[RMDB]
RNA sequence: GGGAACGACUCGAGUAGAGUCGAAAAUUGUCAAUCAUAAGUGAGUACGUCUCCGAAUGAAUCGACUCGUUGAACGACUGGUACGCGUAGAAAGACCGCGCCUCUGCAAUCUGUACAUCCUUUGAAAAAUUCAUGUCGAUAUUCUCCAUGACGAUGCCAGUAACUGUGCAUUCGUGCACAGUUACUGAAAAGAAACAACAACAACAAC
Reactivity to DMS in 0.01 (KOAc 150mM, MgCl2 10mM, bicine 150mM(pH8.5), 24C), signal-to-noise 2, nucleotides 027 to 156: u010u000g000u000c000a100a170u000c070a120u000a090a090g020u000g030a090g000u000a080c040g000u000c010u020c040c000g000a190a060u000g020a060a080u000c010g020a060c030u000c030g010u010u000g020a130a120c060g020a050c010u000g010g060u000a020c050g020c080g030u000a110g000a150a120a170g010a100c040c030g030c040g000c030c020u000c020u010g010c050a000a050u010c020u020g020u000a080c080a040u000c010c010u020u000u010g000a030a040a090a020a070u000u000c040a030u020g010u000c030g000a100u000a090u000u000c030u000c010c000a100u000g000a040c100g030a120u000g020c060
Reactivity to 2A3 in 0.01 (KOAc 150mM, MgCl2 10mM, bicine 150mM(pH8.5), 24C), signal-to-noise 4, nucleotides 027 to 156: u050u070g050u040c040a010a090u030c010a070u090a260a060g090u070g110a010g010u030a040c040g010u020c040u010c010c040g060a080a050u090g040a050a050u060c040g030a030c010u020c090g050u040u110g050a080a020c000g060a070c060u060g040g040u100a030c060g010c010g020u050a070g110a170a130a010g060a060c040c000g000c000g000c000c000u030c010u010g020c010a010a150u000c030u060g050u040a020c010a060u100c030c000u100u120u100g150a100a080a020a020a020u160u110c040a060u060g020u060c000g020a010u000a120u150u080c060u070c030c030a040u070g010a020c060g040a030u130g080c080

The data come from the RNA Mapping Database (RMDB), library OK3TST.
Structure probing data (DMS and 2A3) for a 207-nucleotide construct.
Values cover nucleotides 27 to 156.
The RNA was probed in 150 mM KOAc, 10 mM MgCl2 and 150 mM bicine (pH 8.5) at 24 C.
The DMS profile rests on 2,898 reads.
The 2A3 profile rests on 1,603 reads.
For 2A3 the reverse transcriptase was SuperScript II with manganese.